[RMDB]
RNA sequence: GGGAACGACUCGAGUAGAGUCGAAAAGACGUUUAAGUUCGCUUAAACGUCAAAAACCGUAGGAAUUUGUAGGGAGAAUUUGGUUUCGAAAGAGACCUGAUUCGAGGAUCUACGGGAUUCCUAAACGGAAAAACCAGACAUCUUCGGAUGUCUGGAAGAUGGGAAUAUACUUCGGUAUAUUCCCAUCAAAAGAAACAACAACAACAAC
Reactivity to 2A3 in 0.01 (KOAc 150mM, MgCl2 10mM, bicine 150mM(pH8.5), 24C), signal-to-noise 2, nucleotides 027 to 156: g000a000c010g000u000u000u000a000a000g000u030u080c100g000c050u000u000a000a000a000c000g010u000c000a000a000a000a040a010c020c000g010u020a030g010g010a030a000u030u070u190g010u010a010g000g000g000a020g000a010a000u020u010u030g000g020u000u020u000c020g030a110a040a040g000a020g010a000c000c000u000g000a000u000u000c000g040a060g000g000a000u000c000u010a010c060g080g030g020a010u000u010c000c000u040a130a150a010c020g050g060a050a060a100a000a020c010c040a000g000a000c030a000u030c010u060u080c180g140g000a000u000g000u000c000u000g010g010a000a000
Reactivity to DMS in 0.01 (KOAc 150mM, MgCl2 10mM, bicine 150mM(pH8.5), 24C), signal-to-noise 1, nucleotides 027 to 156: g000a000c000g050u000u010u000a010a000g000u020u030c300g030c000u010u010a000a000a020c010g000u020c000a000a040a070a120a050c010c010g000u000a000g010g000a030a010u000u000u030g010u000a010g020g010g000a100g000a030a010u000u000u000g010g010u010u000u010c000g000a120a170a300g010a020g000a010c000c000u000g000a030u010u000c000g010a110g020g000a090u000c010u010a020c020g010g020g010a070u000u000c000c000u000a000a050a070c050g000g020a040a070a090a110a140c000c000a010g010a010c010a000u000c030u010u010c300g030g010a040u000g010u000c010u000g000g000a010a050
The data come from the RNA Mapping Database (RMDB), library RNAMAK.
Chemical mapping of a 207-nucleotide RNA with 2A3 and DMS.
The reactions ran in a buffer of 150 mM KOAc, 10 mM MgCl2 and 150 mM bicine (pH 8.5), at 24 C.
DMS adducts were read by reverse transcription with MarathonRT.